[RMDB]
RNA sequence: GGGAACGACUCGAGUAGAGUCGAAAAUGCUUGAGCCCAGAAGGUAGAGGCUGCAUUGAGCUAUGAUUGCACCACUGCACUCCAGUCUGGGCAACAGAGCAACACCUGUCUCAAAAAAAUAAAAAUGGCUGGGCCGGGCACCGUGGCUCAUGCCUGACUAGCACUACUGAUUCGUCAGUAGUGCUAGAAAAGAAACAACAACAACAAC
Reactivity to 2A3 in 0.01 (KOAc 150mM, MgCl2 10mM, bicine 150mM(pH8.5), 24C), signal-to-noise 2, nucleotides 027 to 156: u030g000c000u000u000g000a000g000c000c000c000a000g030a000a020g080g010u170a030g000a060g130g000c290u010g020c040a020u010u060g060a050g080c120u090a130u300g090a150u230u090g030c000a050c070c000a060c030u010g020c040a060c160u000c050c010a030g100u000c000u010g000g000g000c000a000a000c010a000g030a000g020c000a030a020c010a070c010c000u070g130u120c020u070c160a060a270a060a000a000a010a040u190a230a090a110a040a010u130g000g000c000u000g000g000g000c000c030g070g070g050c110a080c200c060g180u100g000g000c000u000c030a000u260g010c000c010u000g000a000
Structure probing data (2A3) for a 207-nucleotide construct. The reactions ran in a buffer of 150 mM KOAc, 10 mM MgCl2 and 150 mM bicine (pH 8.5), at 24 C. High 2A3 reactivity points to a flexible backbone, as in loops and unpaired stretches.